This 177-nucleotide RNA was probed chemically with 2A3 and DMS.
For DMS the reverse transcriptase was MarathonRT.
[RMDB]
RNA sequence: GGGAACGACUCGAGUAGAGUCGAAAAUAAAUAGUGCUGACAAACCUGCUCCAAACCGUACCUCUUUACCUUCCAUAUUCGGUCCAUAAAUGCCUAAAUUCGCUAGUAUUGGAUUACCACGAUACUCCUACCCUUCCUAAUUCGUUAGGAAGGGUAGAAAAGAAACAACAACAACAAC
Reactivity to 2A3 in 0.01 (KOAc 150mM, MgCl2 10mM, bicine 150mM(pH8.5), 24C), signal-to-noise 6, nucleotides 027 to 126: u110a010a070a050u110a050g050u050g050c030u030g030a020c050a020a100a040c010c020u020g010c010u020c020c010a060a060a070c030c020g040u060a070c010c010u040c000u060u060u050a070c010c000u020u040c020c020a030u030a080u160u120c050g040g010u010c000c000a060u100a120a130a030u120g030c030c010u080a150a160a140u130u090c060g030c100u040a020g040u020a080u030u040g050g030a050u060u090a060c030c030a040c030g020a020u020a050c020u040c010
Reactivity to DMS in 0.01 (KOAc 150mM, MgCl2 10mM, bicine 150mM(pH8.5), 24C), signal-to-noise 7, nucleotides 027 to 126: u000a080a100a090u010a100g010u000g010c030u000g010a080c110a060a090a110c070c020u000g010c040u000c030c030a060a080a090c100c050g010u000a080c050c030u000c040u000u000u000a070c080c040u000u010c010c030a060u010a100u010u000c070g010g000u000c020c030a070u000a040a070a090u000g010c010c050u010a030a060a120u010u010c100g010c100u000a050g010u000a060u000u000g000g000a110u010u010a090c080c070a070c090g000a040u000a040c070u000c170